[RMDB]
RNA sequence: GGGAACGACUCGAGUAGAGUCGAAAAGAUAUGGAUUGUGAGAGGCUUUGAUCUACUGUAUCGGAAACGAUAUGUAGGGAGCCUCCACAAUCCUAAGUCAAAAGCAGAUUUGUUCGCAAAUCUGCAAGAUUGCUUCUUCGUUCGCGAAGAAGCAAUCAAAAGAAACAACAACAACAAC
Reactivity to 2A3 in 0.01 (KOAc 150mM, MgCl2 10mM, bicine 150mM(pH8.5), 24C), signal-to-noise 1, nucleotides 027 to 126: g000a010u020a010u050g020g000a020u020u020g030u000g040a260g020a000g270g000c030u300u300u040g000a030u000c000u000a000c020u110g070u080a020u020c010g000g000a000a000a000c000g010a020u010a000u010g000u010a000g030g020g000a020g000c000c000u000c000c000a000c010a000a000u000c000c000u010a000a000g000u000c000a020a020a000a140g010c000a000g010a010u020u010u020g040u020u280c300g020c200a020a000a000u000c010u000g000c010a000a000
Chemical mapping of a 177-nucleotide RNA with 2A3. For 2A3 the reverse transcriptase was SuperScript II with manganese. The data come from the RNA Mapping Database (RMDB), library TTRDES. The reactions ran in a buffer of 150 mM KOAc, 10 mM MgCl2 and 150 mM bicine (pH 8.5), at 24 C.